[RMDB]
Structure probing data (2A3) for a 177-nucleotide construct. It was measured as part of the RMDB library RFM100. The 2A3 profile rests on 1,873 reads. Reactivities are given for positions 27 through 126. For 2A3 the reverse transcriptase was SuperScript II with manganese. The RNA was probed in 150 mM KOAc, 10 mM MgCl2 and 150 mM bicine (pH 8.5) at 24 C.
RNA sequence: GGGAACGACUCGAGUAGAGUCGAAAAUCAGAUUUAAUAUAUUGCCUGCAAAAAUAUGCCUCAAUGAUUGAGCCAGGCUACCAACCACCUCCGGAUGAUUAUAUAUAAGAAUUACUACUCAAAAAAUCGUAUGUUAAACGUUCGCGUUUAACAUACGAAAAGAAACAACAACAACAAC
Reactivity to 2A3 in 0.01 (KOAc 150mM, MgCl2 10mM, bicine 150mM(pH8.5), 24C), signal-to-noise 4, nucleotides 027 to 126: u070c010a010g040a060u060u140u210a230a100u200a050u070a070u110u120g010c000c000u020g010c030a000a000a100a080a000u160a090u210g030c000c000u080c030a050a120u140g070a170u190u140g000a010g020c010c000a000g000g000c010u010a030c020c020a000a040c020c000a030c010c010u060c010c030g030g080a040u060g040a000u090u030a050u050a020u010a010u020a180a030g010a010a000u070u020a060c010u000a000c000u000c000a030a150a090a000a060a040u020